[RMDB]
RNA sequence: GGGAACGACUCGAGUAGAGUCGAAAAGAAGCUAAUGCAUAUGGGCUUGAAAAACCCCAUGAAAGCUUGAAUUAACACUGAACUAAAGAUGUCAUCAUAGUGAACCCAUUAGGUUUAAGUGAAUAACAGGUAUCUAAAGGGAAGGGAAAUCAAUUCCCACUUCUGCAAUAUUCGUAUUGCAGAAGUGAAAAGAAACAACAACAACAAC
Reactivity to 2A3 in 0.01 (KOAc 150mM, MgCl2 10mM, bicine 150mM(pH8.5), 24C), signal-to-noise 3, nucleotides 027 to 156: g100a020a000g000c040u110a100a030u180g050c020a070u100a050u190g010g000g010c020u040u030g060a060a000a010a020a000c030c040c000c010a010u090g060a110a100a020g010c010u060u030g050a080a020u150u050a100a010c090a030c100u060g080a060a020c000u060a190a050a000g040a040u030g020u030c010a010u000c000a010u120a080g080u070g090a030a030c040c000c020a110u090u210a040g020g030u010u010u010a060a020g030u030g060a010a030u110a120a040c040a040g010g040u040a020u030c010u080a080a030a070g010g020g040a020a030g010g000g000a030a060a040u080c040a010a090u040u030c020c000
Reactivity to DMS in 0.01 (KOAc 150mM, MgCl2 10mM, bicine 150mM(pH8.5), 24C), signal-to-noise 2, nucleotides 027 to 156: g030a090a030g050c000u000a110a120u010g020c060a080u000a080u000g000g030g080c010u000u030g020a140a130a100a060a110c030c000c000c090a100u010g010a110a210a050g000c000u010u010g030a070a100u000u010a060a180c030a100c010u000g010a210a230c070u000a050a140a090g000a070u000g010u000c000a130u000c020a100u000a110g030u010g000a040a040c000c000c010a120u000u010a130g040g000u000u000u000a110a300g030u010g000a090a070u000a070a090c100a130g030g000u010a030u000c020u010a020a090a100g000g000g000a190a050g030g000g000a060a070a100u000c120a050a280u000u000c000c010
Source: RMDB library OK3TST, as collected in RNAgym. This 207-nucleotide RNA was probed chemically with 2A3 and DMS. For DMS, 3,729 sequencing reads were counted.